[RMDB]
RNA sequence: GGGAACGACUCGAGUAGAGUCGAAAACGUUGGCAGCACAAAUAUGUGUUCCCCAAGCGUGCUGGCAUUGCACCAUUUUUCCAAUUGACCGUGGCCAGCAUGACGUUCUUCUAUCUGAUCAACUACUCGGAGCAGCGUCAUUCGUGACGCUGCUCCGAAAAGAAACAACAACAACAAC
Reactivity to 2A3 in 0.01 (KOAc 150mM, MgCl2 10mM, bicine 150mM(pH8.5), 24C), signal-to-noise 1, nucleotides 027 to 126: c020g020u000u010g000g000c000a000g030c000a000c030a070a060a000u300a080u040g300u000g020u070u000c000c000c010c000a090a020g060c000g020u020g040c000u000g070g000c000a060u000u230g080c080a010c000c000a000u100u250u000u100u070c030c010a100a030u030u060g120a110c000c130g050u020g070g050c050c000a000g020c000a000u050g020a000c000g000u120u000c000u090u000c000u110a180u000c060u040g010a010u040c000a000a060c000u010a010c000u020